[RMDB]
RNA sequence: GGGAACGACUCGAGUAGAGUCGAAAAACAUGGAACACCAACACCAUAUUGUUAACUAUGCAUAUUGUGAUGAAUUUACUGAAUCCGACGAUAUAACGGUGGCCGUGGCCGACUAUUUAUAUUGGUCGUCCAAAGAAUUUCGUAGUAGAGACAGAGCUGUUUGGUAUGAGUUCGCUCAUACCAAACAAAAAGAAACAACAACAACAAC
Reactivity to DMS in 0.01 (KOAc 150mM, MgCl2 10mM, bicine 150mM(pH8.5), 24C), signal-to-noise 2, nucleotides 027 to 156: a060c040a020u010g040g040a090a080c040a120c050c050a060a140c080a100c020c040a130u000a130u010u000g030u000u010a060a090c080u000a070u010g000c060a110u010a080u000u000g010u010g020a060u000g010a070a080u000u000u010a170c190u000g010a050a080u010c060c020g000a030c010g010a050u000a050u010a070a050c120g030g030u010g000g060c020c010g060u000g030g000c150c010g010a030c010u000a050u000u010u000a070u000a090u040u000g030g000u030c000g040u010c020c030a050a080a190g000a060a120u000u000u000c040g020u000a090g040u010a120g000a240g010a170c010a050g000a040g020c090
Reactivity to 2A3 in 0.01 (KOAc 150mM, MgCl2 10mM, bicine 150mM(pH8.5), 24C), signal-to-noise 3, nucleotides 027 to 156: a000c070a070u110g000g020a100a020c070a040c110c020a030a020c020a000c000c040a010u050a060u090u090g060u080u050a090a070c050u090a140u250g000c030a040u050a030u100u100g070u090g030a100u040g030a060a100u080u130u200a140c030u060g060a050a030u070c030c000g050a000c020g010a040u020a020u020a240a020c040g020g010u010g060g000c010c020g010u050g040g010c010c000g040a000c030u040a040u150u250u040a190u030a080u150u000g040g050u010c000g010u000c000c050a010a040a030g080a070a050u120u110u060c070g000u020a030g030u050a010g020a000g010a070c040a020g040a050g130c120

An RNA of 207 nucleotides, treated with DMS and 2A3 and read out base by base.
The reactions ran in a buffer of 150 mM KOAc, 10 mM MgCl2 and 150 mM bicine (pH 8.5), at 24 C.
As a SHAPE reagent, 2A3 marks flexible, mostly unpaired nucleotides at the ribose 2'-OH.
Source: RMDB library OK3TST, as collected in RNAgym.
For DMS, 2,317 sequencing reads were counted.